Annotation: This 177-nucleotide RNA was probed chemically with DMS and 2A3. 2A3 adducts were read by reverse transcription with SuperScript II with manganese. The 2A3 profile rests on 1,771 reads. DMS adducts were read by reverse transcription with MarathonRT. The RNA was probed in 150 mM KOAc, 10 mM MgCl2 and 150 mM bicine (pH 8.5) at 24 C. Source: RMDB library TTRDES, as collected in RNAgym.

RNA sequence: GGGAACGACUCGAGUAGAGUCGAAAAGAUAUGGAUCCAGUAGACAUGCCUACUAUUUCGGAAACGAAAUAAGGCAACAGCUACUAGGAUCCUAAGUCAAAGGUAUCAUAGUUCGCUAUGAUACCAACUACUCCAUGCUCUUCGGAGCAUGGAGUAGAAAAGAAACAACAACAACAAC
Reactivity to DMS in 0.01 (KOAc 150mM, MgCl2 10mM, bicine 150mM(pH8.5), 24C), signal-to-noise 1, nucleotides 027 to 126: g000a010u000a080u010g000g000a000u000c000c040a030g020u000a010g030a030c230a150u000g040c000c000u010a080c230u000a000u000u000u020c000g080g000a050a010a110c010g000a000a030a000u000a000a030g000g020c000a100a060c300a170g020c000u000a000c000u000a130g020g000a020u000c000c000u000a000a120g010u000c010a040a170a150g000g030u000a030u000c000a030u000a000g010u000u020c300g030c000u000a000u010g020a020u010a000c000c030a040a090
Reactivity to 2A3 in 0.01 (KOAc 150mM, MgCl2 10mM, bicine 150mM(pH8.5), 24C), signal-to-noise 1, nucleotides 027 to 126: g000a020u040a000u080g000g010a010u000c010c020a020g020u020a000g070a160c140a300u300g050c000c000u130a260c120u010a020u020u020u010c000g000g000a020a010a020c000g000a000a000a000u000a030a020g040g000c000a090a040c170a050g000c030u000a000c000u060a170g000g000a000u000c000c000u000a000a000g010u000c110a140a090a090g000g000u000a000u000c000a000u000a020g000u060u060c290g000c150u000a010u010g000a000u010a000c000c000a000a010